[RMDB]
RNA sequence: GGGAACGACUCGAGUAGAGUCGAAAACGACACCGGUUACGUCUCACCCACGGCGAUGGAACGGCUGGUGGUAGUCGAUAACGUCAAGGACGCUCUGCGGGCCUGCGCACCUUCCUGAGGUUGGUCGUCGAGUUAUCCAUUUCGAUGGAUAACUCGAAAAAGAAACAACAACAACAAC
Reactivity to 2A3 in 0.01 (KOAc 150mM, MgCl2 10mM, bicine 150mM(pH8.5), 24C), signal-to-noise 2, nucleotides 027 to 126: c050g020a000c000a010c060c000g060g000u030u190a050c030g030u020c010u000c040a080c010c010c010a030c060g100g000c040g070a090u070g120g080a110a070c090g050g010c020u020g000g000u050g030g060u060a040g040u040c040g040a040u060a130a010c020g120u030c100a090a050g070g020a000c000g000c020u020c030u070g000c050g060g030g080c000c000u050g010c020g020c010a050c010c000u030u040c030c040u100g010a050g080g040u040u070g040g020u020c000g020
Reactivity to DMS in 0.01 (KOAc 150mM, MgCl2 10mM, bicine 150mM(pH8.5), 24C), signal-to-noise 3, nucleotides 027 to 126: c060g000a130c050a050c020c000g000g010u000u000a120c030g020u000c020u000c040a040c040c020c020a180c210g000g010c070g040a080u000g000g000a080a110c120g000g000c020u010g010g010u010g010g000u010a060g030u020c040g020a070u000a030a070c050g020u000c080a130a100g020g010a100c040g020c050u010c060u000g010c050g000g000g010c070c060u010g010c060g010c020a030c130c020u000u010c030c020u010g010a070g020g030u010u000g050g020u000c070g010